[RMDB]
RNA sequence: GGGAACGACUCGAGUAGAGUCGAAAAUUCGCCUGACGAGGGGCGACGACCAGAAUGGUGCCGAUGCGGGCGGAAGCAGUGGCCACAGCGCUGCGGUUGGCAUUAUCGCGCUGCGCAUCACUGAGGGCGGGUUAGUGUAUUUCGAUACACUAACCCGAAAAGAAACAACAACAACAAC
Reactivity to 2A3 in 0.01 (KOAc 150mM, MgCl2 10mM, bicine 150mM(pH8.5), 24C), signal-to-noise 2, nucleotides 027 to 126: u000u000c020g010c010c000u060g050a140c100g090a120g000g070g000g050c020g020a060c030g030a030c010c000a020g150a150a120u160g070g000u040g040c040c010g020a020u070g000c000g000g070g000c040g030g020a050a010g010c020a010g030u060g090g010c000c030a080c050a110g000c040g020c020u040g000c000g010g060u050u070g100g000c060a060u110u170a110u150c060g000c010g030c080u090g040c020g000c000a060u020c000a030c020u050g030a130g080g070g020
Reactivity to DMS in 0.01 (KOAc 150mM, MgCl2 10mM, bicine 150mM(pH8.5), 24C), signal-to-noise 3, nucleotides 027 to 126: u010u000c010g010c000c020u010g020a130c200g030a160g010g030g010g020c010g020a000c170g010a090c040c010a090g020a120a100u000g010g010u010g000c010c030g000a120u000g000c040g010g000g010c020g010g020a140a150g010c030a020g030u000g020g040c170c090a030c080a070g010c010g020c040u000g000c020g020g020u010u000g010g010c060a100u000u010a110u000c100g010c030g010c060u000g010c100g040c010a050u000c020a060c060u010g010a090g000g010g010